Notes: The record gives the reactivity of an RNA of 177 nucleotides to 2A3 and DMS. The data come from the RNA Mapping Database (RMDB), library OK1LIB. 2A3 adducts were read by reverse transcription with SuperScript II with manganese. Values cover nucleotides 27 to 126. The reactions ran in a buffer of 150 mM KOAc, 10 mM MgCl2 and 150 mM bicine (pH 8.5), at 24 C. For DMS the reverse transcriptase was MarathonRT.
[RMDB]
RNA sequence: GGGAACGACUCGAGUAGAGUCGAAAAUCGAUAUCGCGAGAAACAUAGGUGUAGGCAGAAUCCCAGCUAUUUUGCCCAUCGCUAUCAUGAUUCCAGGUUGAGUAGUUACGAAAACGCCAUGCGCCAACCUAUUAUCGGGCUUCGGCCCGAUAAUAGGAAAAGAAACAACAACAACAAC
Reactivity to 2A3 in 0.01 (KOAc 150mM, MgCl2 10mM, bicine 150mM(pH8.5), 24C), signal-to-noise 2, nucleotides 027 to 126: u070c010g000a000u020a000u110c160g000c040g020a010g080a130a180a030c140a120u130a110g050g070u070g000u110a030g020g000c010a020g010a050a070u120c010c000c000a030g020c000u030a040u080u050u050u050g030c000c040c020a050u000c000g000c040u060a080u210c050a060u190g020a110u080u040c050c010a030g000g000u050u170g010a050g010u100a000g050u050u070a000c070g060a020a030a070a010c130g000c020c000a020u150g000c030g020c020c000a010a050
Reactivity to DMS in 0.01 (KOAc 150mM, MgCl2 10mM, bicine 150mM(pH8.5), 24C), signal-to-noise 2, nucleotides 027 to 126: u030c130g060a010u010a000u000c160g050c000g010a040g000a140a100a160c090a030u000a070g070g000u030g060u030a100g000g000c120a130g050a050a080u000c060c150c070a100g000c090u010a010u000u000u000u000g100c080c000c090a050u000c030g000c060u010a140u020c050a030u020g000a100u040u000c000c000a040g000g040u030u000g050a030g010u000a120g000u050u030a020c100g000a080a000a070a240c160g010c000c040a020u000g010c010g000c000c000a040a130